[RMDB]
RNA sequence: GGGAACGACUCGAGUAGAGUCGAAAAACAAGCCGAUUCGUCGGCUUGUAAAAAAACCUUUGUGCGUGUAGAGCGAGGAUCAUACUGAGGCCCAUUGGGCCUAGUAUGGGAGCUCGCACGCACUCUGGUAAAAAACCGCAUAGUUCGCUAUGCGGAACUAUGUUUCUCGUUUCGACGAGAAACAUAGAAAAGAAACAACAACAACAAC
Reactivity to 2A3 in 0.01 (KOAc 150mM, MgCl2 10mM, bicine 150mM(pH8.5), 24C), signal-to-noise 2, nucleotides 027 to 156: a000c000a000a000g010c000c000g010a020u040u070c210g050u000c010g100g000c000u000u010g000u010a000a000a000a000a000a000a010c010c000u030u000u000g000u000g010c010g000u000g010u060a220g020a000g020c000g020a240g020g000a000u010c000a000u010a000c020u120g200a050g040g000c060c020c080a200u300u300g030g000g010c010c000u000a000g000u000a000u000g000g010g000a020g000c000u000c000g010c000a000c010g000c000a000c000u000c000u010g030g000u040a150a130a000a000a000a030c000c000g000c000a000u000a000g020u050u070c300g000c130u000a000u000g000c030g020g000a000a000
Structure probing data (2A3) for a 207-nucleotide construct.
2A3 adducts were read by reverse transcription with SuperScript II with manganese.
It was measured as part of the RMDB library RNAMAK.
For 2A3, 1,665 sequencing reads were counted.